[RMDB]
RNA sequence: GGGAACGACUCGAGUAGAGUCGAAAAGUGUAAAUUUCGAUACUGCAUGGUUGCACUCUUGUGCAUCCAUUCAGAUCCAACUGGCAGUCAAGCAGGGGAGGCAAUUUGCAGUGCAGAGUAGGGUCAACGCCGUAAGAUAUUUCGAUAUCUUACGGCGAAAAGAAACAACAACAACAAC
Reactivity to 2A3 in 0.01 (KOAc 150mM, MgCl2 10mM, bicine 150mM(pH8.5), 24C), signal-to-noise 3, nucleotides 027 to 126: g110u130g060u170a100a160a160u100u140u090c050g000a030u030a300c000u000g000c020a010u000g010g000u010u000g000c010a010c000u180c090u240u300g000u000g000c000a010u010c010c000a000u020u000c000a000g000a020u000c040c020a030a070c050u050g050g000c020a030g040u080c020a060a020g000c000a040g030g010g020g010a020g000g030c000a020a110u050u050u110g010c030a010g010u020g070c040a010g010a040g060u080a060g010g020g000u030c010a040a050
Reactivity to DMS in 0.01 (KOAc 150mM, MgCl2 10mM, bicine 150mM(pH8.5), 24C), signal-to-noise 3, nucleotides 027 to 126: g020u020g010u000a050a090a090u000u000u010c110g030a080u000a100c000u010g000c100a020u000g020g010u000u000g000c010a020c000u010c300u000u010g020u000g000c000a000u000c010c000a000u000u000c000a000g010a080u010c010c150a070a080c130u000g010g020c070a050g020u000c090a070a110g010c080a070g000g010g010g010a070g010g010c070a040a050u020u000u000g000c060a030g010u010g020c050a030g000a060g010u010a050g000g000g000u010c070a050a160
Annotation:
The record gives the reactivity of an RNA of 177 nucleotides to 2A3 and DMS. The reactions ran in a buffer of 150 mM KOAc, 10 mM MgCl2 and 150 mM bicine (pH 8.5), at 24 C. High 2A3 reactivity points to a flexible backbone, as in loops and unpaired stretches.